[RMDB]
RNA sequence: GGGAACGACUCGAGUAGAGUCGAAAAGACUUUUAUUAUACCACAUGACUACAGCUACGUCAAGCGGUGUUGCAUCUGAUUAGUGUAACUCAGGUGCGUAACGGUGUGACGAGUGUAGCGGCGGUGUAUCUAAAUCGAUUACCGCUUCCACCGUCCAAUCCCCAUUACCGUUCGCGGUAAUGGGGAUAAAAGAAACAACAACAACAAC
Reactivity to 2A3 in 0.01 (KOAc 150mM, MgCl2 10mM, bicine 150mM(pH8.5), 24C), signal-to-noise 3, nucleotides 027 to 156: g080a010c030u040u130u140u080a140u170u080a090u120a100c050c020a080c060a180u130g110a060c010u020a000c060a130g030c040u090a100c070g000u000c000a050a060g120c020g040g040u020g010u070u120g010c000a000u020c000u000g030a050u040u090a160g150u150g070u240a080a020c010u010c010a010g000g000u010g000c010g020u020a040a030c010g020g070u210g020u020g100a000c000g000a000g050u030g000u000a010g000c010g020g000c020g000g000u030g050u030a020u000c020u080a050a110a110u170c060g010a020u050u000a030c000c010g000c040u010u050c020c010a080c040c010g040u060c020c010a000

Structure probing data (2A3) for a 207-nucleotide construct. 2A3 adducts were read by reverse transcription with SuperScript II with manganese. Source: RMDB library OK3TST, as collected in RNAgym.